[RMDB]
RNA sequence: GGGAACGACUCGAGUAGAGUCGAAAAGAUGCGUCGUGGAAGUCCCGUGACGCAACAUCCACGGUCCGCGGAGGUACCUCGGCCGGCGGAGAGUUGCGUUGGGAGAUUCAGCGGGCAAAGCCGUGGGGCCCCUUGCUACGUUCGCGUAGUAAGGGGCAAAAGAAACAACAACAACAAC
Reactivity to 2A3 in 0.01 (KOAc 150mM, MgCl2 10mM, bicine 150mM(pH8.5), 24C), signal-to-noise 1, nucleotides 027 to 126: g060a000u050g020c000g050u020c000g020u040g050g010a060a010g040u040c000c000c000g060u090g020a000c020g000c000a000a000c010a020u000c000c000a010c000g000g000u160c010c000g000c020g000g000a050g130g150u140a170c000c000u000c000g030g010c000c000g000g030c130g000g030a040g020a040g010u000u010g010c000g030u000u030g010g000g020a070g000a020u040u030c010a020g000c010g000g000g000c000a010a010a000g020c000c000g000u010g050g010g060
Reactivity to DMS in 0.01 (KOAc 150mM, MgCl2 10mM, bicine 150mM(pH8.5), 24C), signal-to-noise 2, nucleotides 027 to 126: g000a050u000g030c030g020u020c000g030u010g010g010a030a080g000u020c030c000c000g000u030g010a000c000g010c000a000a010c000a200u000c010c000a060c000g000g030u090c010c000g000c130g000g020a300g040g030u050a170c010c000u020c030g000g040c010c020g000g000c270g000g000a030g000a090g010u000u000g000c020g020u010u000g010g010g010a010g010a120u020u010c040a120g010c040g010g000g000c020a000a030a040g000c040c020g010u030g010g000g030